[RMDB]
RNA sequence: GGGAACGACUCGAGUAGAGUCGAAAAAGCGCAUCUAGAGAGAUUGUACACGUUGAGGCUAGUGUGUCUCUCAACGUGAGUCUCUCUAGAAAUGGAGAGUGAGUGUGUUGAGAAGACACACUAGCACUCAACACAUACCUCACUCUCUAUUCACGCAGGAUGAUUAGUAUUUCGAUACUAAUCAUCCAAAAGAAACAACAACAACAAC
Reactivity to DMS in 0.01 (KOAc 150mM, MgCl2 10mM, bicine 150mM(pH8.5), 24C), signal-to-noise 3, nucleotides 027 to 156: a040g030c100g030c030a170u000c080u000a020g010a040g010a030g010a210u000u000g020u010a110c040a150c110g010u000u000g000a020g000g010c020u000a050g000u000g020u000g010u000c010u000c000u010c010a010a000c000g020u010g010a170g010u010c000u000c000u000c000u020a000g020a020a060a110u000g020g000a050g010a050g010u010g000a190g030u010g030u000g020u000u000g000a060g010a140a130g010a070c000a030c010a030c030u000a020g000c050a130c010u000c000a020a010c000a050c060a130u000a060c080c070u000c110a080c020u000c000u010c010u000a020u000u000c040a050c040g020c000a130
Reactivity to 2A3 in 0.01 (KOAc 150mM, MgCl2 10mM, bicine 150mM(pH8.5), 24C), signal-to-noise 8, nucleotides 027 to 156: a000g040c030g000c020a040u030c050u030a000g000a000g020a020g020a090u030u170g070u070a040c090a050c190g000u000u000g000a000g010g000c010u010a010g010u010g000u000g000u010c000u000c000u000c020a000a000c000g040u050g020a010g030u020c000u010c000u000c000u010a000g000a000a000a000u030g000g000a000g000a000g000u060g030a100g070u180g020u020g020u060u010g010a020g030a190a070g010a030c010a000c000a000c010u000a000g000c000a010c000u000c000a000a000c000a000c000a000u060a020c010c020u040c050a090c020u000c000u000c000u000a020u050u090c110a040c020g000c020a020

Record summary
An RNA of 207 nucleotides, treated with DMS and 2A3 and read out base by base. For DMS the reverse transcriptase was MarathonRT. For 2A3 the reverse transcriptase was SuperScript II with manganese.